The record gives the reactivity of an RNA of 207 nucleotides to DMS and 2A3. The RNA was probed in 150 mM KOAc, 10 mM MgCl2 and 150 mM bicine (pH 8.5) at 24 C. Source: RMDB library M2RFPK, as collected in RNAgym. The 2A3 profile rests on 758 reads.

[RMDB]
RNA sequence: GGGAACGACUCGAGUAGAGUCGAAAACCCUGUCAUGAGGCCGAAACGAAGGCACGUACCCCUUCGAAUGGCGUCGGGGAGUCAGCGGCUAUAUAUCCGCCUAAUGCUGGCAUCCGGGAACGAGCGUAUUAGACAGUAAUCUUCGGAUUACUGUCAACGUGACUAUGUUCUUCGGAACAUAGUCACGAAAAGAAACAACAACAACAAC
Reactivity to DMS in 0.01 (KOAc 150mM, MgCl2 10mM, bicine 150mM(pH8.5), 24C), signal-to-noise 1, nucleotides 027 to 156: c020c000c000u010g000u000c080a030u000g000a080g060g000c000c020g040a110a130a240c040g000a040a030g020g020c080a180c160g040u000a110c110c080c000c050u020u000c000g020a110a240u010g060g020c010g020u000c080g020g000g020g030a190g040u000c130a050g040c020g010g000c070u000a110u000a190u000a090u000c050c060g000c000c040u010a090a070u000g030c030u000g010g010c020a210u000c020c000g000g050g000a090a050c080g020a110g000c050g020u000a070u000u020a090g030a000c010a000g020u000a010a010u000c000u000u000c260g070g020a010u000u000a020c000u010g010u000c030a000a010
Reactivity to 2A3 in 0.01 (KOAc 150mM, MgCl2 10mM, bicine 150mM(pH8.5), 24C), signal-to-noise 1, nucleotides 027 to 156: c000c000c000u010g090u110c030a020u080g000a090g170g000c000c060g070a050a100a070c010g000a000a000g000g090c100a030c030g100u150a070c000c070c000c000u000u000c020g020a100a080u210g020g040c050g030u120c000g000g000g020g000a090g020u020c010a000g000c040g000g000c010u010a020u000a050u030a080u300c040c070g060c030c000u210a240a040u300g000c000u000g000g000c020a110u020c010c020g040g000g000a040a090c080g010a020g010c050g000u120a050u040u040a160g020a000c000a000g020u000a000a000u000c000u000u120c160g050g000a000u000u000a000c010u000g000u000c000a000a000